[RMDB]
RNA sequence: GGGAACGACUCGAGUAGAGUCGAAAAUUCGUCUAGAGGUUUCAAUGUGUCUAUACAAAUUGAACACUGGGCGGUACACCGCUCCCAGUUGGAUGCUAACACUUAGGUAGGGGACACUCCUCUGGGAAAUCAUCAGCUCAUUCGUGAGCUGAUGAUUAAAAGAAACAACAACAACAAC
Reactivity to DMS in 0.01 (KOAc 150mM, MgCl2 10mM, bicine 150mM(pH8.5), 24C), signal-to-noise 2, nucleotides 027 to 126: u000u000c040g020u000c000u010a010g010a090g020g010u000u010u010c060a020a020u000g020u000g000u010c270u000a190u020a070c030a040a020a070u010u000g000a090a080c050a040c000u000g010g000g000c030g000g040u010a060c240a170c020c020g010c250u000c030c010c000a020g020u000u000g010g020a090u000g020c090u000a080a150c140a060c070u000u020a090g020g020u000a040g000g000g000g010a120c070a040c000u010c000c010u000c010u010g010g010g000a070
Reactivity to 2A3 in 0.01 (KOAc 150mM, MgCl2 10mM, bicine 150mM(pH8.5), 24C), signal-to-noise 1, nucleotides 027 to 126: u020u030c000g000u010c010u000a000g010a060g050g060u050u260u260c030a010a050u130g020u010g010u120c060u160a150u020a170c000a040a120a060u040u030g040a080a010c030a000c000u000g000g010g000c010g050g030u060a060c120a100c000c030g030c060u040c000c010c010a020g100u190u070g000g020a020u040g050c070u060a160a060c020a040c190u140u070a040g240g040u060a050g060g170g000g060a040c000a000c020u000c020c000u040c000u000g010g000g000a010
Annotation: This 177-nucleotide RNA was probed chemically with DMS and 2A3. For 2A3, 1,040 sequencing reads were counted. For DMS, 1,268 sequencing reads were counted. The reactions ran in a buffer of 150 mM KOAc, 10 mM MgCl2 and 150 mM bicine (pH 8.5), at 24 C. DMS adducts were read by reverse transcription with MarathonRT.